This 207-nucleotide RNA was probed chemically with 2A3 and DMS.
Reactivities are given for positions 27 through 156.
2A3 adducts were read by reverse transcription with SuperScript II with manganese.
The data come from the RNA Mapping Database (RMDB), library OK3TST.
Conditions: 150 mM KOAc, 10 mM MgCl2 and 150 mM bicine (pH 8.5), 24 C.
DMS (dimethyl sulfate) methylates the pairing face of unpaired adenines and cytosines.
RNA sequence: GGGAACGACUCGAGUAGAGUCGAAAAUUAACACCACGUGGAAGCCACCAAGGCUUAGGGCUUGUACUCUUCUGAAGCAAUGGCCCAAGCUAUACCUUGGCUCAUUUUAGCCAUGGCUGGAGUUGGAACAGCCACAAUGAAGGGUGCCACGUCUGGAACUAUCCUACUCGUUCGCGAGUAGGAUAGUAAAAGAAACAACAACAACAAC
Reactivity to 2A3 in 0.01 (KOAc 150mM, MgCl2 10mM, bicine 150mM(pH8.5), 24C), signal-to-noise 2, nucleotides 027 to 156: u100u030a060a070c050a070c100c000a010c010g000u000g000g050a050a080g120c010c020a080c010c060a210a130g060g030c050u010u020a250g000g000g000c030u000u070g030u160a140c040u050c050u270u000c090u200g200a190a020g000c050a000a140u060g020g010c000c000c000a000a000g000c040u060a080u190a230c020c070u060u050g000g000c000u000c040a120u100u150u130u260a010g000c030c010a010u050g000g020c010u020g080g010a100g010u130u120g050g050a060a010c000a010g010c010c010a020c080a010a060u160g030a050a000g000g020g010u000g010c000c000a000c010g010u000c080u060g050g030a000
Reactivity to DMS in 0.01 (KOAc 150mM, MgCl2 10mM, bicine 150mM(pH8.5), 24C), signal-to-noise 2, nucleotides 027 to 156: u010u010a140a130c030a150c000c010a070c010g050u000g000g000a110a080g030c040c020a210c140c080a050a270g010g040c010u010u010a100g090g010g000c000u020u010g000u000a000c000u010c030u000u030c130u000g010a130a020g040c020a150a080u000g050g010c040c000c000a030a030g000c050u000a110u010a040c040c010u000u000g010g030c000u040c180a120u010u000u000u000a070g010c030c010a040u000g040g010c000u010g050g000a090g020u010u000g020g020a090a100c020a070g000c030c010a040c060a050a120u000g000a100a060g020g010g040u010g010c060c010a030c030g000u000c010u020g010g000a180